[RMDB]
RNA sequence: GGGAACGACUCGAGUAGAGUCGAAAAGAUAUGGAAGCAUCUAUUGUCAGAAAUGUCAUCGGAAACGAUGACCUUUCUUGGAUUUAUAGAGUGCUUCCUAAGUCAAAGUCGUACUUCGGUACGACAAUCUUUCGUAAUCGUUCGCGAUUACGAAAGAAAAAGAAACAACAACAACAAC
Reactivity to 2A3 in 0.01 (KOAc 150mM, MgCl2 10mM, bicine 150mM(pH8.5), 24C), signal-to-noise 2, nucleotides 027 to 126: g040a030u070a020u170g000g020a000a000g000c010a010u000c000u010a000u000u060g020u060c010a020g000a000a030a020u050g000u000c000a000u000c000g010g070a100a000a090c010g000a010u000g000a000c000c000u000u000u040c000u000u210g190g010a030u140u300u130a020u040a000g040a060g130u060g010c020u010u020c000c000u010a070a020g060u020c090a140a070a060g040u000c010g000u000a010c020u070u080c300g130g010u000a020c010g000a000c000a010a020
Reactivity to DMS in 0.01 (KOAc 150mM, MgCl2 10mM, bicine 150mM(pH8.5), 24C), signal-to-noise 2, nucleotides 027 to 126: g000a030u010a300u000g000g000a030a010g000c010a050u000c000u000a000u000u000g030u000c000a030g010a020a010a010u000g010u000c000a000u000c020g030g000a170a080a250c000g020a010u000g010a000c010c020u000u000u000c000u000u020g020g010a070u000u000u000a010u010a000g010a040g010u000g020c000u000u000c000c000u000a000a090g000u000c110a100a120a200g000u000c000g000u000a000c000u000u010c290g010g020u000a000c000g010a010c000a080a040